[RMDB]
RNA sequence: GGGAACGACUCGAGUAGAGUCGAAAAGGGGUCUCCAUGGGAAGCCCUGUGGAGCUUGGAUUUAUACAGCUGAAGCCUCCACGGCUGUAUUGUCAGCUCCACCUGGCUUCAUAUGGAGACGGAGGCACCCAAACCUUAUAACUUCGGUUAUAAGGAACUACAGAACUAGAUUCGUCUAGUUCUGUAGAAAAGAAACAACAACAACAAC
Reactivity to 2A3 in 0.01 (KOAc 150mM, MgCl2 10mM, bicine 150mM(pH8.5), 24C), signal-to-noise 5, nucleotides 027 to 156: g040g000g010g000u000c000u000c000c010a010u020g040g030g020a000a000g020c040c050c080u060g010u010g030g000a000g030c070u130u180g080g000a030u090u300u080a010u070a010c000a010g000c000u020g060a200a000g050c020c040u050c030c020a020c000g010g000c000u010g000u000a000u010u020g010u020c030a010g000c000u000c000c000a000c010c030u020g010g000c000u010u000c000a000u010a000u010g000g000a000g000a000c000g010g000a010g010g020c020a070c010c000c000a030a080a180c000c000u000u000a000u000a000a000c010u040u080c300g100g000u000u000a000u000a000a000g000g010a010a010
Reactivity to DMS in 0.01 (KOAc 150mM, MgCl2 10mM, bicine 150mM(pH8.5), 24C), signal-to-noise 1, nucleotides 027 to 156: g010g030g010g030u000c000u000c010c000a040u000g000g010g010a040a050g010c020c010c060u000g010u000g000g000a020g020c010u000u010g020g030a080u000u000u000a010u010a030c010a020g020c010u020g030a070a120g010c050c020u000c020c050a300c030g000g000c000u000g020u010a010u000u000g000u000c030a080g010c010u010c010c000a010c010c060u000g000g020c010u000u000c020a050u000a000u000g000g000a040g000a020c000g010g020a050g060g010c030a130c020c010c000a070a090a140c000c000u010u000a010u000a000a010c000u000u000c300g030g010u010u000a020u000a010a000g000g010a050a120
Chemical mapping of a 207-nucleotide RNA with 2A3 and DMS.
The DMS profile rests on 4,458 reads.
DMS adducts were read by reverse transcription with MarathonRT.
Source: RMDB library RNAMAK, as collected in RNAgym.